[RMDB]
RNA sequence: GGGAACGACUCGAGUAGAGUCGAAAAUGUAACUCAUAUGCAUCCAGAUCGAUUGAUUCUCCAACCAACCAGCCGCAAAAGCCAUCAUCCUUCCCAUAUCGUAGCUCUGCCCAACUAAACUGGAUGACCAUAGAGUAUUCUUCGGAAUACUCUAUGGAAAAGAAACAACAACAACAAC
Reactivity to 2A3 in 0.01 (KOAc 150mM, MgCl2 10mM, bicine 150mM(pH8.5), 24C), signal-to-noise 4, nucleotides 027 to 126: u110g020u050a100a030c010u020c110a040u080a060u260g020c000a020u000c000c000a020g020a110u090c060g040a090u040u090g040a050u070u040c040u010c030c030a050a090c020c010a020a060c000c020a040g040c010c020g010c030a040a070a030a030g030c020c010a030u040c000a030u030c030c010u030u000c000c000c010a020u060a020u070c050g040u030a020g020c000u020c030u070g020c000c010c000a040a050c040u130a130a040a040c010u040g010g030a040u020g040a020
Reactivity to DMS in 0.01 (KOAc 150mM, MgCl2 10mM, bicine 150mM(pH8.5), 24C), signal-to-noise 5, nucleotides 027 to 126: u020g020u010a080a130c070u000c050a100u010a100u000g010c010a040u000c010c010a050g010a100u010c100g010a120u010u010g010a140u000u010c040u000c030c040a070a100c080c060a080a070c060c030a070g010c030c040g010c080a040a060a080a120g000c020c030a050u000c010a060u000c030c020u000u000c000c020c000a100u000a040u010c060g020u000a070g020c040u000c050u010g010c010c020c020a050a090c130u010a040a090a120c060u000g000g000a050u000g000a200
The record gives the reactivity of an RNA of 177 nucleotides to 2A3 and DMS. For DMS the reverse transcriptase was MarathonRT. It was measured as part of the RMDB library OK2TST. The 2A3 profile rests on 5,385 reads. The DMS profile rests on 5,467 reads. The RNA was probed in 150 mM KOAc, 10 mM MgCl2 and 150 mM bicine (pH 8.5) at 24 C. 2A3 adducts were read by reverse transcription with SuperScript II with manganese.